[RMDB]
RNA sequence: GGGAACGACUCGAGUAGAGUCGAAAAUCACAGAAUGCACUUUCUACCCUGUGUGCCAUGGAGACCUCCUAUGGAAAAAUGAUCAGCCACCUUACCUUCUACUGGGUACCUGCUGUGAGUCUGCCUAUGCCAGAAGGAUUAAGGAGGGGAGGUUACCCCUCUGCUAACCGUUCGCGGUUAGCAGAGGAAAAGAAACAACAACAACAAC
Reactivity to 2A3 in 0.01 (KOAc 150mM, MgCl2 10mM, bicine 150mM(pH8.5), 24C), signal-to-noise 1, nucleotides 027 to 156: u140c110a070c110a090g000a040a050u180g110c000a030c120u190u280u080c000u050a090c050c040c060u100g020u000g020u010g110c000c000a080u050g020g090a070g030a160c000c000u000c020c020u150a120u060g030g000a000a000a000a240a150u300g040a250u050c150a000g080c020c000a030c040c000u020u000a000c000c000u000u000c050u080a080c060u000g020g000g000u000a050c000c030u070g110c080u110g090u090g100a010g050u040c040u020g010c000c000u060a200u240g040c120c000a000g040a000a000g100g020a050u230u170a010a000g000g040a060g000g010g000g000a000g000g010u000u010a000c000c030
Record summary:
Structure probing data (2A3) for a 207-nucleotide construct. Values cover nucleotides 27 to 156. The reactions ran in a buffer of 150 mM KOAc, 10 mM MgCl2 and 150 mM bicine (pH 8.5), at 24 C.